An RNA of 177 nucleotides, treated with 2A3 and DMS and read out base by base. Reactivities are rounded to 0.1 and cut off at 0 and 3.
RNA sequence: GGGAACGACUCGAGUAGAGUCGAAAAGGCGAACAGCGCGUCAUGGAAGGUGCCGGUUUCGAUCAGUGGCAUGCCCAGCGCGUUGCGCCGGAUCGAUACGUUUUGCGCCAGGCCCUUGAUCGGUUGACGUAUAAAAUCCUUUCGAGGAUUUUAUACGAAAAGAAACAACAACAACAAC
Reactivity to 2A3 in 0.01 (KOAc 150mM, MgCl2 10mM, bicine 150mM(pH8.5), 24C), signal-to-noise 7, nucleotides 027 to 126: g010g000c030g020a160a070c110a010g000c000g000c010g030u070c080a180u060g020g030a080a080g160g000u010g020c010c010g070g040u050u090u140c180g060a120u070c030a050g160u130g110g000c020a000u130g090c000c000c010a010g000c010g000c000g010u010u010g010c010g010c000c000g000g000a010u010c010g020a010u020a150c030g010u030u020u120u140g040c020g020c010c010a040g030g060c010c000c020u040u070g050a060u040c010g030g010u050u090g040a040
Reactivity to DMS in 0.01 (KOAc 150mM, MgCl2 10mM, bicine 150mM(pH8.5), 24C), signal-to-noise 8, nucleotides 027 to 126: g000g020c010g000a120a140c040a020g020c000g010c010g010u000c090a150u010g000g020a070a090g010g010u000g010c010c020g010g010u000u000u010c130g010a060u000c080a140g030u010g010g010c010a020u000g020c100c010c020a060g000c010g010c010g020u000u000g010c050g000c030c020g000g000a160u000c020g000a040u000a080c070g000u000u000u010u000g010c060g010c020c030a080g000g000c020c010c020u000u000g000a050u000c010g010g010u000u000g010a240

Notes
The DMS profile rests on 24,267 reads.